[RMDB]
The data come from the RNA Mapping Database (RMDB), library OK3TST. Structure probing data (2A3 and DMS) for a 207-nucleotide construct. Reactivities are given for positions 27 through 156.

RNA sequence: GGGAACGACUCGAGUAGAGUCGAAAACAUGGUAUGGCCUCGCAUCCGGCCUACCAACAGAAUCAACAACUUAGGAUGCGGUGGGCGAGAGCCCUAAGAAGGAGUCUCCCCGCCUGGGGAGCUCCGUAUGACUUAAUGUAUUACCAGGCGCAUACAACAGUAUUACGAUCUUCGGAUCGUAAUACUGAAAAGAAACAACAACAACAAC
Reactivity to 2A3 in 0.01 (KOAc 150mM, MgCl2 10mM, bicine 150mM(pH8.5), 24C), signal-to-noise 3, nucleotides 027 to 156: c030a030u040g010g000u060a110u290g020g000c010c030u090c040g000c000a000u000c000c000g000g000c000c000u010a000c020c010a000a020c040a040g160a050a090u220c050a030a090c020a010a080c070u140u220a020g010g000a010u010g000c000g000g040u020g000g000g020c020g010a040g010a040g050c010c000c000u010a030a010g050a020a030g010g000a000g030u060c010u000c050c000c000c010g000c000c010u010g000g010g000g000a000g010c000u000c000c000g000u010a030u030g060a010c030u050u110a170a050u220g090u200a140u120u150a040c000c000a010g000g000c010g000c060a050u110a160c040a120a000
Reactivity to DMS in 0.01 (KOAc 150mM, MgCl2 10mM, bicine 150mM(pH8.5), 24C), signal-to-noise 2, nucleotides 027 to 156: c080a170u030g000g010u010a010u010g040g010c000c000u010c030g000c020a040u000c040c050g030g060c000c000u000a020c000c000a050a300c060a090g010a090a120u000c030a110a100c130a070a120c200u000u010a060g020g020a010u000g020c010g030g020u050g000g020g090c050g000a290g000a200g000c000c000c010u000a040a110g020a140a190g000g010a040g020u060c010u000c000c010c030c020g010c110c130u030g010g000g000g000a040g000c000u010c000c000g020u000a010u000g010a090c100u000u000a060a110u020g010u000a040u000u010a070c070c020a130g020g000c030g020c090a190u010a070c040a070a180